[RMDB]
RNA sequence: GGGAACGACUCGAGUAGAGUCGAAAAGAUAUGGAUUGCACGCAACAGCUAUGAUGUCGGAAACGACAUAUAGACAUGCUCGCAAUCCUAAGUCAAACCGUUAAGGCAGUUCGCUGCCUUAACGGAAGUCAUGCGUAUCCUUCGGGAUACGCAUGACAAAAGAAACAACAACAACAAC
Reactivity to 2A3 in 0.01 (KOAc 150mM, MgCl2 10mM, bicine 150mM(pH8.5), 24C), signal-to-noise 2, nucleotides 027 to 126: g020a010u030a010u100g000g000a010u000u000g010c020a020c080g000c020a110a170c090a300g060c000u010a020u100g300a060u020g100u000c030g000g000a000a000a000c000g010a000c010a010u010a000u000a010g020a190c080a220u140g030c000u000c070g000c000a000a010u000c000c010u020a030a020g010u020c000a000a070a080c000c000g000u000u010a000a000g000g000c010a000g000u010u120c270g060c140u010g000c000c000u000u000a000a000c000g010g010a010a000
Reactivity to DMS in 0.01 (KOAc 150mM, MgCl2 10mM, bicine 150mM(pH8.5), 24C), signal-to-noise 2, nucleotides 027 to 126: g000a030u000a100u040g000g000a000u000u000g020c000a120c140g000c010a090a110c300a180g000c000u000a000u000g000a000u010g060u000c000g000g020a070a010a050c000g010a000c000a000u000a000u000a010g050a120c110a190u000g050c010u000c210g000c000a040a010u000c000c000u000a020a070g000u000c010a100a110a120c020c000g000u000u000a030a010g000g010c000a030g000u000u000c270g000c010u000g000c010c000u000u000a000a020c000g000g000a010a020